[RMDB]
RNA sequence: GGGAACGACUCGAGUAGAGUCGAAAAUGGUAGUCCGCCACUCUAAGGGGACGCCUUUAGAAGAAGAGGGUAGGUGGUAUUCCGGUGUGGGAUACUUGGUAAUAUGUAACGCUAAUUGCAUAAGAUUAAAACUUUGCAUACUUCGGUAUGCAAAGAACUCCUAACCGUUGUUCGCAACGGUUAGGAGAAAAGAAACAACAACAACAAC
Reactivity to 2A3 in 0.01 (KOAc 150mM, MgCl2 10mM, bicine 150mM(pH8.5), 24C), signal-to-noise 1, nucleotides 027 to 156: u140g000g090u060a170g010u020c020c020g080c160c000a140c060u170c080u170a130a190g000g000g000g020a010c020g060c000c020u040u050u080a050g020a040a010g000a050a030g010a050g120g000g000u050a050g050g040u010g030g020u050a090u030u080c020c020g010g090u090g040u170g100g040g010a020u030a020c010u070u080g010g020u100a070a040u020a080u120g040u030a050a000c020g000c110u070a080a140u070u090g020c000a080u040a120a130g010a140u120u140a020a120a000a000c000u020u000u000g000c000a000u000a000c010u000u020c010g000g010u000a000u000g000c000a000a000a000g000a000a000